[RMDB]
RNA sequence: GGGAACGACUCGAGUAGAGUCGAAAAUUGUAAUGUUCCAGCACUGUUUUUAAUUAGGAUUUUAGGUCUGAGUCCUCCUCCUAAAAAUCCAGAUGGAAAUGUAACCAUUAUUACACCGUAAUCAUAGCUAGUGAUUCUCUUUCCUUGAAAGCUAUCAUCCAUACCGAUUAUUCGUAAUCGGUAUGGAAAAAGAAACAACAACAACAAC
Reactivity to DMS in 0.01 (KOAc 150mM, MgCl2 10mM, bicine 150mM(pH8.5), 24C), signal-to-noise 2, nucleotides 027 to 156: u010u010g000u010a060a120u000g010u000u000c040c000a120g000c030a070c030u000g010u000u010u000u000u000a030a160u010u000a150g020g000a130u000u000u000u000a050g010g010u000c030u000g010a170g010u010c090c050u000c140c060u000c020c010u000a010a030a040a040a070u000c020c010a170g000a130u010g030g000a050a050a070u000g010u000a080a070c040c060a060u010u010a130u000u000a100c050a070c060c120g000u000a080a080u000c040a040u000a090g040c050u000a090g020u000g000a120u010u010c060u010c090u000u010u010c020c010u010u010g010a050a100a080g000c050u000a050u010c050a180
Reactivity to 2A3 in 0.01 (KOAc 150mM, MgCl2 10mM, bicine 150mM(pH8.5), 24C), signal-to-noise 2, nucleotides 027 to 156: u160u110g020u010a060a030u070g050u040u020c040c010a010g010c000a040c070u020g050u040u060u030u010u210a170a200u120u050a060g000g010a060u040u060u000u070a020g010g060u100c170u140g130a110g120u090c050c020u020c000c010u000c000c020u080a030a020a030a020a020u000c000c010a020g070a060u080g000g040a090a080a000u080g030u090a020a070c020c000a040u010u060a020u060u030a090c030a030c040c040g100u130a050a010u110c030a010u030a050g040c030u030a000g080u050g140a160u130u010c040u030c000u040u040u090c000c020u000u020g100a050a030a020g040c030u070a020u140c000a030

Annotation
The data come from the RNA Mapping Database (RMDB), library OK3TST. An RNA of 207 nucleotides, treated with DMS and 2A3 and read out base by base. For DMS, 4,647 sequencing reads were counted. DMS adducts were read by reverse transcription with MarathonRT. 2A3 adducts were read by reverse transcription with SuperScript II with manganese. The 2A3 profile rests on 1,051 reads. Values cover nucleotides 27 to 156.